[RMDB]
RNA sequence: GGGAACGACUCGAGUAGAGUCGAAAAAGCAUGUUAGGUUCGCAUGGUGCACUAUUGUGUUAUUGGUAACUAAGUAAGCUUACAAUCGAAAAUGUUUAACCAUAAAAGGGUAAAAUGGUGUAAGACAGAUACCCUCUGAGCUUCGGCUCAGAGGGAACGCAACACUGAAGUUCGCUUCAGUGUUGCGAAAAGAAACAACAACAACAAC
Reactivity to 2A3 in 0.01 (KOAc 150mM, MgCl2 10mM, bicine 150mM(pH8.5), 24C), signal-to-noise 2, nucleotides 027 to 156: a000g110c070a030u130g000u080u080a030g040g080u040u050c010g020c030a030u040g040g010u070g000c000a020c060u130a200u100u130g070u020g020u080u010a070u120u010g070g000u030a030a010c010u010a050a050g160u000a060a020g050c010u050u050a050c120a040a140u190c070g080a010a000a030a030u060g000u050u070u040a000a010c000c000a030u120a040a150a000a010g110g000g080u140a010a020a110a110u000g000g070u020g000u040a080a020g020a020c030a000g080a070u210a170c000c000c000u070c000u040g000a000g010c000u100u060c260g070g000c000u000c000a000g020a010g000g000g000a010a010